[RMDB]
RNA sequence: GGGAACGACUCGAGUAGAGUCGAAAACUACCGGGCGGCUGCCCGCCGGAUGCCCCAGCGGAUCGCGUCCGAGGCGGACAUGAUCAUCCCGGAGUUCAGGCGGACCAUGUCGCCGCCCCAAGCGUCGACGCGGACGCCGGCCUCGCGACCGAGGGCGCAUGUAAUUGUUGUUCGCAACAAUUACAUGAAAAGAAACAACAACAACAAC
Reactivity to 2A3 in 0.01 (KOAc 150mM, MgCl2 10mM, bicine 150mM(pH8.5), 24C), signal-to-noise 5, nucleotides 027 to 156: c030u140a200c010c020g020g000g010c020g010g020c010u040g020c010c010c020g000c010c010g050g000a050u080g020c020c020c000c010a060g080c110g100g000a080u080c060g000c010g030u000c030c030g040a100g060g120c090g000g010a010c020a070u180g060a140u080c020a070u100c030c010c000g000g010a010g010u030u080c070a070g000g000c010g030g040a200c030c040a080u120g010u050c020g010c010c000g000c000c000c000c010a110a040g000c010g010u000c000g020a110c060g010c040g080g000a000c000g000c000c010g030g000c000c000u020c010g040c080g120a110c080c040g010a050g020g020g010c020g000
Reactivity to DMS in 0.01 (KOAc 150mM, MgCl2 10mM, bicine 150mM(pH8.5), 24C), signal-to-noise 2, nucleotides 027 to 156: c030u010a210c030c030g010g020g010c250g010g030c040u000g010c060c030c010g040c010c020g020g000a060u000g020c040c020c020c040a160g000c060g010g010a050u000c040g020c020g030u010c010c000g020a110g050g020c030g020g000a040c020a020u000g000a110u000c020a130u000c020c010c000g000g010a130g020u000u000c050a070g020g010c030g000g000a110c000c040a060u000g000u000c030g010c030c010g020c020c020c030c090a070a130g010c020g030u000c020g000a060c070g020c070g000g000a120c000g010c000c000g020g010c030c020u000c060g010c080g010a130c070c030g000a110g000g020g030c060g020
An RNA of 207 nucleotides, treated with 2A3 and DMS and read out base by base. Conditions: 150 mM KOAc, 10 mM MgCl2 and 150 mM bicine (pH 8.5), 24 C.